[RMDB]
RNA sequence: GGGAACGACUCGAGUAGAGUCGAAAACACAUGCCAUCAUAUCGGUUAAGAACUCUUAACUCUGAUGGCUUUCGAGUUAUGUGGUGCAUUGAAGCUCUCGCUUCAAUUCAACGUACCGUUCCGUCAAGUACAUACCCUCAUUCGUGAGGGUAUGUACAAAAGAAACAACAACAACAAC
Reactivity to DMS in 0.01 (KOAc 150mM, MgCl2 10mM, bicine 150mM(pH8.5), 24C), signal-to-noise 6, nucleotides 027 to 126: c090a100c220a080u000g010c000c000a000u000c010a050u000a140u000c300g000g000u010u000a000a010g000a240a170c300u000c010u010u000a000a000c000u000c100u000g000a010u000g000g000c010u000u010u000c030g000a070g000u010u000a040u000g010u000g020g010u010g000c110a010u000u000g010a010a010g010c010u000c210u000c300g010c000u010u000c000a000a010u000u000c050a080a040c040g020u000a010c050c010g010u000u000c000c000g010u000c130a060a120
Reactivity to 2A3 in 0.01 (KOAc 150mM, MgCl2 10mM, bicine 150mM(pH8.5), 24C), signal-to-noise 5, nucleotides 027 to 126: c070a000c010a050u170g010c030c000a000u000c000a010u080a060u260c070g020g000u010u000a020a010g040a250a260c040u040c010u270u000a000a010c000u010c040u120g000a020u010g000g000c000u010u030u010c010g000a000g000u100u050a070u160g080u090g060g120u030g020c000a000u000u010g010a000a000g000c020u050c060u100c300g010c020u020u020c000a010a010u030u030c020a030a020c030g000u020a010c020c000g010u000u000c030c010g140u150c110a160a090